RNA sequence: GGGAACGACUCGAGUAGAGUCGAAAAGAAGGCUGGGGUCGCACAGCUCCUAAAGAGGAGGGCAAUGCGUGAGGCUGGUUUCACAGAGCAGCGACCACCUCCCGCUCUCGGCAGUGGAAGGAUAACGGGUCGGUGCUACUUGGGCCACCAUGGUCACGUUGAUAUCUCAGUUCGCUGAGAUAUCAACAAAAGAAACAACAACAACAAC
Reactivity to 2A3 in 0.01 (KOAc 150mM, MgCl2 10mM, bicine 150mM(pH8.5), 24C), signal-to-noise 3, nucleotides 027 to 156: g070a040a020g050g000c030u050g010g000g020g010u050c030g000c040a070c030a040g010c020u080c010c020u130a140a120a020g110a040g050g020a030g010g000g000c000a030a050u080g020c030g030u040g010a040g040g040c090u040g000g060u040u140u230c050a080c010a030g030a000g010c010a020g100c000g000a000c000c000a010c010c010u000c000c000c000g000c000u020c020u040c040g240g000c130a020g000u010g020g020a030a000g030g010a070u080a290a040c140g070g000g000u000c010g030g030u000g000c010u100a290c010u030u050g040g030g000c010c000a010c030c020a040u090g020g000u060c050a020c070
Source: RMDB library ARCHII, as collected in RNAgym. An RNA of 207 nucleotides, treated with 2A3 and read out base by base. The RNA was probed in 150 mM KOAc, 10 mM MgCl2 and 150 mM bicine (pH 8.5) at 24 C. Values are in units of 0.01, from 0 to 300, in steps of 10.